[RMDB]
RNA sequence: GGGAACGACUCGAGUAGAGUCGAAAAGGGCUCACAGGAGAUUUUGAGCAGGGCAGGGAAGUGACCUGACGCAGGAUCACAGAAUUCUUAGGCUGUCUCUGGGAACAGACUACGGUCAGGGGACAGAAUCUUAUACUGCCUUCGGGCAGUAUAAGAUAAAAGAAACAACAACAACAAC
Reactivity to 2A3 in 0.01 (KOAc 150mM, MgCl2 10mM, bicine 150mM(pH8.5), 24C), signal-to-noise 1, nucleotides 027 to 126: g000g000g010c040u070c020a080c100a040g160g070a170g040a110u110u070u110u160g030a050g000c020a020g020g000g050c080a060g050g050g040a120a080g030u030g030a050c010c010u000g020a070c070g000c120a000g040g000a040u050c000a010c030a030g190a130a050u100u030c000u060u090a050g100g000c020u010g030u040c030u010c030u040g030g030g030a000a050c030a050g030a030c010u050a020c170g050g020u020c010a020g000g010g020g030a020c000a010g070a000
Reactivity to DMS in 0.01 (KOAc 150mM, MgCl2 10mM, bicine 150mM(pH8.5), 24C), signal-to-noise 3, nucleotides 027 to 126: g010g020g030c060u010c090a080c160a090g000g010a150g010a170u020u000u000u010g010a090g020c070a080g000g000g010c060a050g000g010g020a140a110g010u010g010a040c020c020u000g020a160c150g010c030a030g030g010a070u010c010a070c050a160g010a120a120u000u010c060u010u010a120g000g010c020u000g010u000c100u000c010u010g020g010g020a100a110c200a110g020a050c020u010a070c180g020g010u000c020a170g000g010g000g030a050c060a050g010a170
This 177-nucleotide RNA was probed chemically with 2A3 and DMS. For 2A3 the reverse transcriptase was SuperScript II with manganese. The data come from the RNA Mapping Database (RMDB), library OK2TRN. DMS adducts were read by reverse transcription with MarathonRT.